[RMDB]
RNA sequence: GGGAACGACUCGAGUAGAGUCGAAAACGCUAUGGUGAGGUGAUGUCCUUUCCUUCUGACGCUUUCGCUGUCCAGCGAAUUCGUGAGGCUAUGAAGCCUGAGAUGCUCGCAGAAAUUGAGCUCUGUAAUGUAGGAUUCAUUGAUAUUGACACUGGUGCAGAAACAGUCAUUUCGAUGACUGUUUCUGAAAAGAAACAACAACAACAAC
Reactivity to 2A3 in 0.01 (KOAc 150mM, MgCl2 10mM, bicine 150mM(pH8.5), 24C), signal-to-noise 5, nucleotides 027 to 156: c070g020c090u090a060u120g040g030u050g020a040g000g030u070g060a120u110g080u100c030c000u030u060u030c030c000u070u090c030u080g070a020c010g000c030u010u000u020c000g000c010u070g110u210c080c060a020g000c000g010a020a010u030u030c020g010u060g060a030g020g000c010u010a040u300g140a080a020g010c010c000u030g030a030g000a040u170g000c020u020c030g060c070a050g160a160a140a080u190u190g010a020g000c010u000c000u040g130u120a090a120u140g060u090a040g020g020a040u030u020c020a020u020u100g060a060u080a080u160u160g030a010c020a010c130u070g050g000u140g010
Reactivity to DMS in 0.01 (KOAc 150mM, MgCl2 10mM, bicine 150mM(pH8.5), 24C), signal-to-noise 2, nucleotides 027 to 156: c030g020c000u000a060u000g010g030u010g000a080g020g010u000g030a180u000g060u010c040c040u020u000u010c020c010u000u000c040u010g020a060c020g010c010u000u000u000c000g030c030u010g030u000c120c100a070g030c020g010a050a070u000u000c030g060u000g010a070g030g020c050u000a090u010g010a110a070g030c000c020u000g000a050g000a080u000g040c000u010c030g000c130a120g010a090a090a230u010u010g010a080g020c020u030c010u000g030u000a060a060u000g010u010a060g010g020a080u010u000c030a080u000u000g020a120u020a100u010u000g020a150c000a060c060u010g000g060u010g020

This 207-nucleotide RNA was probed chemically with 2A3 and DMS. Source: RMDB library OK3TST, as collected in RNAgym. For DMS, 5,474 sequencing reads were counted. 2A3 adducts were read by reverse transcription with SuperScript II with manganese.